[RMDB]
RNA sequence: GGGAACGACUCGAGUAGAGUCGAAAAGAAGUUAGACAUUAACACCAUCGGAUGCUGACUCAGUGGUCUGUCGGCUGAGUGCUCUGGCGCGAGACUGGUAGGUCCUGGGUUCGAAUCUCGCGAGGCGCUCGUGGGGAGCGUUCGCGCUCCCCACGAGAAAAGAAACAACAACAACAAC
Reactivity to DMS in 0.01 (KOAc 150mM, MgCl2 10mM, bicine 150mM(pH8.5), 24C), signal-to-noise 1, nucleotides 027 to 126: g000a180a150g060u000u030a030g000a280c140a070u010u000a000a050c130a100c060c030a030u000c030g030g000a060u000g030c060u020g000a070c000u020c020a000g000u020g020g000u050c140u010g000u000c000g000g010c040u000g000a300g020u020g010c000u010c260u020g020g000c030g020c000g000a220g030a030c000u000g000g000u000a000g000g000u000c000c040u010g000g020g000u040u070c100g000a140a070u000c030u040c060g060c100g040a110g000g000c090g000
Reactivity to 2A3 in 0.01 (KOAc 150mM, MgCl2 10mM, bicine 150mM(pH8.5), 24C), signal-to-noise 2, nucleotides 027 to 126: g120a080a000g080u110u250a110g040a040c070a250u050u110a020a010c010a020c070c000a140u030c080g040g000a030u070g010c080u090g010a000c000u000c000a020g000u040g220g020u030c020u020g120u030c000g030g020c040u070g040a040g090u000g000c000u020c090u200g190g000c000g000c010g050a050g030a090c020u020g000g030u020a000g060g020u040c020c000u030g040g100g000u040u060c000g020a060a050u000c010u030c040g050c020g020a040g000g020c010g020